[RMDB]
Structure probing data (DMS and 2A3) for a 177-nucleotide construct.
DMS adducts were read by reverse transcription with MarathonRT.
2A3 adducts were read by reverse transcription with SuperScript II with manganese.
The 2A3 profile rests on 2,100 reads.
It was measured as part of the RMDB library TTRDEL.
RNA sequence: GGGAACGACUCGAGUAGAGUCGAAAAGAUAUGGAGUAGGUAGCGCGAAGAACCGUAACAUCGCUCGGAAACGAGCGUGGGGGAGCGUGUACUACUCCUAAGUCAAAGCCACCGUUCGCGGUGGCAACAACCAACUACCGUUCGCGGUAGUUGGUUGAAAAGAAACAACAACAACAAC
Reactivity to DMS in 0.01 (KOAc 150mM, MgCl2 10mM, bicine 150mM(pH8.5), 24C), signal-to-noise 2, nucleotides 027 to 126: g000a040u000a300u000g000g010a000g000u000a010g000g000u000a300g040c010g000c020g020a110a130g000a290a240c000c000g000u000a040a040c190a030u010c030g030c000u000c000g010g010a080a050a300c010g020a000g000c000g010u010g000g000g000g020g000a080g000c030g000u020g030u000a290c020u000a010c000u020c000c000u000a010a060g070u000c030a120a050a180g050c000c010a010c000c000g010u010u000c260g000c060g000g040u010g000g000c020a000a030
Reactivity to 2A3 in 0.01 (KOAc 150mM, MgCl2 10mM, bicine 150mM(pH8.5), 24C), signal-to-noise 2, nucleotides 027 to 126: g040a010u110a050u160g010g000a010g000u020a030g000g080u150a010g040c020g000c000g080a300a040g030a080a060c000c000g040u120a060a040c090a270u290c010g020c010u000c010g000g030a150a040a050c000g010a010g020c000g010u000g000g000g010g000g000a030g000c030g000u190g100u300a020c000u010a000c000u000c000c000u000a030a000g000u000c020a000a080a000g040c030c000a000c010c000g000u060u040c300g010c000g080g000u000g000g000c000a000a000